[RMDB]
RNA sequence: GGGAACGACUCGAGUAGAGUCGAAAAACGGCUUUCAGCAAGUGAUUUAAGUUCUAUGUGUCUGAGAUUCCUAAUUUGUGAAAUGAAAAUAAUAGCUUCCACCCAACAUUAUGGUUAAUUAAAUGAGCUAUUGUAUGUUAGGCACACAGCCCAGAGACCUGCAUUAGCUAUUCGUAGCUAAUGCAGGAAAAGAAACAACAACAACAAC
Reactivity to DMS in 0.01 (KOAc 150mM, MgCl2 10mM, bicine 150mM(pH8.5), 24C), signal-to-noise 1, nucleotides 027 to 156: a100c020g000g020c080u020u000u000c030a200g030c060a090a090g020u000g010a010u000u000u000a020a200g000u000u020c050u000a060u000g000u000g020u020c000u050g000a060g000a110u000u000c000c010u040a060a180u060u060u000g010u020g000a070a050a140u000g000a070a110a090a070u000a030a010u000a020g010c020u000u010c070c020a040c050c070c030a070a050c110a090u010u000a110u000g040g010u000u000a030a080u000u000a030a060a180u000g000a080g000c000u000a010u000u000g030u010a050u000g010u020u000a010g000g030c000a020c020a010c070a090g000c070c060c010a090g030a150g000a200
Reactivity to 2A3 in 0.01 (KOAc 150mM, MgCl2 10mM, bicine 150mM(pH8.5), 24C), signal-to-noise 2, nucleotides 027 to 156: a000c030g020g010c030u050u070u090c050a050g070c060a100a100g040u030g150a060u140u190u260a070a060g030u080u000c030u030a040u070g010u000g030u020c010u020g040a060g000a100u030u040c000c000u050a110a300u130u200u140g150u050g060a060a070a070u060g060a060a100a060a000u110a020a020u030a000g020c010u070u060c060c030a070c070c040c000a000a150c030a070u170u260a070u120g000g030u030u070a060a100u080u130a060a110a130u170g010a020g000c000u010a030u070u040g000u020a160u060g030u000u090a010g030g000c000a000c010a000c060a030g030c000c000c070a100g060a090g010a120
The record gives the reactivity of an RNA of 207 nucleotides to DMS and 2A3.
The RNA was probed in 150 mM KOAc, 10 mM MgCl2 and 150 mM bicine (pH 8.5) at 24 C.
The DMS profile rests on 1,764 reads.